[RMDB]
Annotation:
The data come from the RNA Mapping Database (RMDB), library M2PK50. Structure probing data (DMS and 2A3) for a 177-nucleotide construct. The 2A3 profile rests on 15,171 reads. The RNA was probed in 150 mM KOAc, 10 mM MgCl2 and 150 mM bicine (pH 8.5) at 24 C. For 2A3 the reverse transcriptase was SuperScript II with manganese.

RNA sequence: GGGAACGACUCGAGUAGAGUCGAAAACUCGAACGGUUCGCCGUUCGAGAAAAGCGCGUCAGCGCUACGAUGCAAGCGCAAGCGCGUGCUUCGUAAAUGAAAAAACUUGUGUGUUCGCACACAAGAAGACUUAUUAACUCUUCGGAGUUAAUAAGUCAAAAGAAACAACAACAACAAC
Reactivity to DMS in 0.01 (KOAc 150mM, MgCl2 10mM, bicine 150mM(pH8.5), 24C), signal-to-noise 5, nucleotides 027 to 126: c000u000c000g010a010a000c000g000g020u000u010c220g030c000c000g010u000u000c010g010a010g000a040a030a050a190g010c010g000c000g030u000c110a300g010c000g010c000u000a010c070g010a090u010g030c140a100a030g020c000g020c030a150a190g010c020g010c000g010u000g010c090u000u010c050g010u010a050a070a100u000g000a010a070a100a060a080a100c010u000u000g020u010g010u000g010u000u010c210g030c010a010c000a000c000a000a000g000a080a070
Reactivity to 2A3 in 0.01 (KOAc 150mM, MgCl2 10mM, bicine 150mM(pH8.5), 24C), signal-to-noise 7, nucleotides 027 to 126: c000u000c000g000a010a000c010g010g040u060u070c200g040c080c010g000u000u000c000g000a000g000a000a040a000a000g010c000g000c000g060u090c070a040g000c000g000c000u010a010c040g120a100u190g050c130a040a030g000c010g000c070a100a050g060c020g000c020g040u010g010c010u040u040c020g090u070a090a140a180u250g110a110a060a030a020a020a070c000u000u000g000u000g000u000g010u020u060c240g030c070a000c000a000c000a000a000g010a020a020